[RMDB]
RNA sequence: GGGAACGACUCGAGUAGAGUCGAAAAGGUCAGGAUCCACCGGAUGACCGAACACAUGAGUCCUGGUUGGCCUACUCUUGUGGAUUAGGAGCGAGACGACGAUGUUCGCAUUCGUCGAGCUCCGAAAGGCAUGCUUCUCGUUCGCGAGGAGCAUGCCAAAAGAAACAACAACAACAAC
Reactivity to 2A3 in 0.01 (KOAc 150mM, MgCl2 10mM, bicine 150mM(pH8.5), 24C), signal-to-noise 4, nucleotides 027 to 126: g020g010u020c020a000g030g040a110u050c010c040a060c030c090g040g040a070u110g040a030c020c030g020a090a070c090a000c000a050u140g040a010g050u090c030c070u070g060g040u110u100g050g010c000c000u060a060c020u060c000u020u030g010u030g050g070a060u060u100a040g010g020a000g000c040g000a030g020a010c000g010a000c060g040a030u060g040u140u130c210g000c130a050u110u090c000g010u000c010g000a000g000c010u020c010c000g000a000a000a000
Reactivity to DMS in 0.01 (KOAc 150mM, MgCl2 10mM, bicine 150mM(pH8.5), 24C), signal-to-noise 3, nucleotides 027 to 126: g020g020u010c100a030g010g000a040u010c050c040a030c030c010g010g000a080u010g000a110c070c020g000a160a060c100a080c090a040u020g000a170g000u000c010c030u010g000g000u020u000g020g030c120c010u020a030c030u000c020u000u000g020u010g010g010a100u000u020a080g010g000a000g000c000g010a270g000a050c000g040a030c300g000a070u020g000u020u040c140g080c100a090u000u000c000g000u000c000g000a250g010c000u010c000c010g000a050a070a140
The data come from the RNA Mapping Database (RMDB), library OK1LIB. Structure probing data (2A3 and DMS) for a 177-nucleotide construct. The reactions ran in a buffer of 150 mM KOAc, 10 mM MgCl2 and 150 mM bicine (pH 8.5), at 24 C. For 2A3 the reverse transcriptase was SuperScript II with manganese. Reactivities are given for positions 27 through 126. For DMS, 4,416 sequencing reads were counted.